The data come from the RNA Mapping Database (RMDB), library M2PK50. This 177-nucleotide RNA was probed chemically with 2A3 and DMS. For DMS the reverse transcriptase was MarathonRT.
RNA sequence: GGGAACGACUCGAGUAGAGUCGAAAACCCUGGUUAUUCGUAACCAGGGGUUGAGUGAAUCCUCUCAGUGCAUCGGUGGAUCACACGAAACGCAUGGUCGACAAUUACGGUUAUUCGUAACCGUAAAUGUUCUUUUGUAGUUCGCUACAAAAGAACAAAAAGAAACAACAACAACAAC
Reactivity to 2A3 in 0.01 (KOAc 150mM, MgCl2 10mM, bicine 150mM(pH8.5), 24C), signal-to-noise 4, nucleotides 027 to 126: c000c000c000u010g010g000u030u010a050u030u100c220g020u030a000a000c000c000a000g000g000g010g000u050u170g040a020g030u070g060a070a100u030c030c000u020c030u030c050a060g040u050g110c030a100u050c060g080g000u070g050g040a080u100c020a020c000a010c080g090a070a030a020c060g010c040a060u090g060g050u090c020g030a050c040a090a080u050u000a010c000g000g010u020u010a010u020u100c200g030u050a020a020c000c000g000u000a000a000a000
Reactivity to DMS in 0.01 (KOAc 150mM, MgCl2 10mM, bicine 150mM(pH8.5), 24C), signal-to-noise 5, nucleotides 027 to 126: c000c000c000u000g010g000u000u000a020u000u010c160g010u000a010a000c010c000a010g010g010g000g010u000u000g000a140g020u000g020a150a090u000c010c000u000c040u000c050a100g010u010g000c080a040u000c050g000g000u000g000g000a110u000c100a040c030a070c030g000a040a040a080c080g010c050a050u010g000g010u000c070g000a070c130a100a130u000u000a010c000g000g000u000u000a040u000u010c200g010u010a010a010c000c000g020u000a000a010a080
Notes:
The 2A3 profile rests on 6,126 reads. The reactions ran in a buffer of 150 mM KOAc, 10 mM MgCl2 and 150 mM bicine (pH 8.5), at 24 C.